RNA sequence: GGGAACGACUCGAGUAGAGUCGAAAAUUUGGCCAAAAACAUGUUCAAUGCCUGCUGUAUGGUACUUGAGCAGAGGUGCCCAACCAGUGUUGAGGCCAGGUCAUCCUGGAUACUUUAAACCCUUGGCGUUUAGGUCCUUUUUCGAAAGGACCUAAACAAAAGAAACAACAACAACAAC
Reactivity to DMS in 0.01 (KOAc 150mM, MgCl2 10mM, bicine 150mM(pH8.5), 24C), signal-to-noise 3, nucleotides 027 to 126: u010u010u000g010g010c010c010a020a070a050a040a020c040a150u000g020u000u000c000a010a020u010g000c000c000u010g020c170u000g000u010a050u000g000g000u000a000c300u000u000g010a030g010c000a110g010a090g010g010u010g000c030c020c040a150a070c020c030a190g020u000g020u000u010g010a300g010g000c010c000a010g000g010u000c080a170u010c020c010u010g020g000a080u000a030c070u000u000u010a080a030a090c040c030c040u010u000g010g010c300
Reactivity to 2A3 in 0.01 (KOAc 150mM, MgCl2 10mM, bicine 150mM(pH8.5), 24C), signal-to-noise 2, nucleotides 027 to 126: u050u030u040g020g000c000c000a060a080a000a000a000c020a030u030g000u030u010c000a010a020u010g000c020c020u100g070c120u230g090u300a130u110g020g000u020a060c110u030u000g000a000g010c020a020g010a040g070g010u030g030c020c000c010a010a020c000c000a050g040u020g020u120u020g010a020g020g000c000c010a000g010g000u070c010a020u070c000c010u000g050g050a070u100a230c050u100u140u160a110a150a160c050c000c000u030u040g090g000c040
An RNA of 177 nucleotides, treated with DMS and 2A3 and read out base by base.
2A3 adducts were read by reverse transcription with SuperScript II with manganese.
The DMS profile rests on 2,814 reads.
For 2A3, 2,957 sequencing reads were counted.
DMS adducts were read by reverse transcription with MarathonRT.
High DMS reactivity at an A or C suggests that its Watson-Crick edge is free.